Structure probing data (DMS) for a 177-nucleotide construct. The RNA was probed in 150 mM KOAc, 10 mM MgCl2 and 150 mM bicine (pH 8.5) at 24 C. The DMS profile rests on 997 reads. DMS adducts were read by reverse transcription with MarathonRT. Values are in units of 0.01, from 0 to 300, in steps of 10.
RNA sequence: GGGAACGACUCGAGUAGAGUCGAAAAGAUAUGGAGAUUCCCAAAAAUGGACGAAGAACUGGAAGUAUAGGACUCGGAAACGAGUCCUAUACUUCCAGGGAGUCCAUAAUGGGAGAUCUCCUAAGUCGUAAUGAUUAUGCUUCGGCAUAAUCAUUACAAAAGAAACAACAACAACAAC
Reactivity to DMS in 0.01 (KOAc 150mM, MgCl2 10mM, bicine 150mM(pH8.5), 24C), signal-to-noise 1, nucleotides 027 to 126: g000a120u010a300u000g010g000a040g010a000u010u000c000c000c000a030a030a080a140a040u000g010g000a000c030g000a110a230g000a170a190c010u000g030g000a030a010g040u000a010u000a000g050g010a070c010u000c000g050g000a070a070a170c030g030a010g040u020c010c000u000a000u000a000c010u000u010c000c000a010g000g000g030a090g010u010c000c000a010u010a010a300u000g000g010g000a020g000a000u000c010u000c030c010u010a010a130g000u000c120
The data come from the RNA Mapping Database (RMDB), library TTRINS.